[RMDB]
RNA sequence: GGGAACGACUCGAGUAGAGUCGAAAACUGCGGCCUGCUACGAGCGGUACGUACAUACACGCGCUAUCUAUGACGUACGCGGCCCAGCGCUGCGCGCAUACAGUACUGAGUACGAUGCGCCAGGAUCAGUUUGGAAUGAAUUCGUUCAUUCCAAACUAAAAGAAACAACAACAACAAC
Reactivity to DMS in 0.01 (KOAc 150mM, MgCl2 10mM, bicine 150mM(pH8.5), 24C), signal-to-noise 8, nucleotides 027 to 126: c050u000g010c140g020g010c010c010u000g050c020u000a030c030g010a170g010c130g000g000u000a020c010g000u010a110c160a130u000a080c220a080c090g010c040g010c130u000a070u000c090u000a100u010g020a190c010g000u000a010c140g030c020g000g010c000c020c020a010g000c110g000c020u000g000c190g020c010g020c010a010u000a060c100a180g020u000a010c020u010g000a150g020u000a010c020g000a060u000g000c000g020c000c010a020g000g000a120u010c120
Reactivity to 2A3 in 0.01 (KOAc 150mM, MgCl2 10mM, bicine 150mM(pH8.5), 24C), signal-to-noise 7, nucleotides 027 to 126: c030u050g020c040g070g000c000c030u190g010c020u040a060c050g060a040g060c040g000g020u040a030c010g030u030a060c030a130u200a050c100a030c160g090c010g030c090u050a030u110c020u040a130u200g100a070c010g000u010a010c110g010c010g100g000c000c010c000a030g030c100g010c030u020g000c030g010c000g000c100a010u170a160c070a100g010u010a000c030u220g170a030g100u010a000c020g030a010u000g000c000g000c000c000a010g010g020a110u150c030
Annotation:
An RNA of 177 nucleotides, treated with DMS and 2A3 and read out base by base. Reactivities are rounded to 0.1 and cut off at 0 and 3. For DMS the reverse transcriptase was MarathonRT. The data come from the RNA Mapping Database (RMDB), library OK2TRN. Conditions: 150 mM KOAc, 10 mM MgCl2 and 150 mM bicine (pH 8.5), 24 C.